[RMDB]
RNA sequence: GGGAACGACUCGAGUAGAGUCGAAAAGAUAUGGAAUUGAACUACGAGCAAAACAGGCUAAGACAGUCUUAUGGGAUCGGAAACGAUCCCAUAAGAUCGAGCCUGUUUAGCUCGCAAUUCCUAAGUCGUUAUCGAAAAGGUUCGCCUUUUCGAUAACAAAAGAAACAACAACAACAAC
Reactivity to DMS in 0.01 (KOAc 150mM, MgCl2 10mM, bicine 150mM(pH8.5), 24C), signal-to-noise 3, nucleotides 027 to 126: g000a030u010a210u000g000g000a010a030u000u020g010a080a080c120u020a300c040g010a010g000c000a070a050a040a000c020a000g000g010c000u010a160a140g020a190c300a090g000u000c000u000u000a000u010g000g000g020a000u010c000g030g010a040a040a130c010g010a010u000c000c000c000a000u010a000a000g000a000u000c150g000a060g020c000c000u010g000u000u000u000a080g020c000u000c020g010c000a000a000u000u010c000c000u000a020a140g000u000c040
Reactivity to 2A3 in 0.01 (KOAc 150mM, MgCl2 10mM, bicine 150mM(pH8.5), 24C), signal-to-noise 2, nucleotides 027 to 126: g050a000u100a080u180g000g000a020a000u050u000g020a070a050c110u190a120c300g020a010g010c010a000a020a000a040c000a030g000g040c010u110a260a030g300a250c150a080g110u020c010u000u000a000u000g040g010g000a000u000c010g000g020a020a030a030c020g000a010u010c010c000c010a010u000a000a000g010a000u010c000g010a010g010c000c020u000g000u000u000u010a000g000c010u040c010g000c000a000a000u010u000c000c000u000a080a000g030u060c060
The record gives the reactivity of an RNA of 177 nucleotides to DMS and 2A3. The data come from the RNA Mapping Database (RMDB), library TTRINS. The 2A3 profile rests on 3,298 reads. Reactivities are given for positions 27 through 126.